[RMDB]
RNA sequence: GGGAACGACUCGAGUAGAGUCGAAAAACUGGAAAGUUGAACUGUAAAAAGUGAUAGUCUUGUACACGUAAGAAUAUUAAUCGUAGUAGUAUCCUGAGUACCACGGAGCACGUGAAAUUCUGUGGGAGUCUAUUAAGAACUUCGGUUCUUAAUAGACAAAAGAAACAACAACAACAAC
Reactivity to DMS in 0.01 (KOAc 150mM, MgCl2 10mM, bicine 150mM(pH8.5), 24C), signal-to-noise 3, nucleotides 027 to 126: a070c050u010g010g010a100a100a050g000u000u000g010a180a070c030u000g020u010a070a090a120a160a070g000u010g010a080u000a040g000u000c010u000u000g010u000a090c110a040c090g010u000a070a060g000a040a040u000a040u000u000a070a040u000c060g020u010a090g030u010a030g010u000a070u000c020c010u000g000a110g000u010a170c010c020a000c020g010g000a040g020c210a070c080g010u010g010a080a070a050u000u000c000u000g000u000g020g000g000a130
Reactivity to 2A3 in 0.01 (KOAc 150mM, MgCl2 10mM, bicine 150mM(pH8.5), 24C), signal-to-noise 2, nucleotides 027 to 126: a010c020u020g080g090a110a050a150g030u060u060g090a070a030c040u030g040u140a020a030a000a040a060g040u050g030a050u050a020g080u000c000u040u080g050u040a030c040a000c100g000u020a020a050g020a060a050u100a050u160u130a130a050u080c040g000u030a060g010u000a020g030u000a110u070c010c010u040g060a040g150u100a060c000c000a000c010g010g020a000g000c050a000c170g040u080g090a130a000a000u050u010c020u000g020u000g040g000g000a030

Source information: The record gives the reactivity of an RNA of 177 nucleotides to DMS and 2A3. As a SHAPE reagent, 2A3 marks flexible, mostly unpaired nucleotides at the ribose 2'-OH. For 2A3, 1,153 sequencing reads were counted.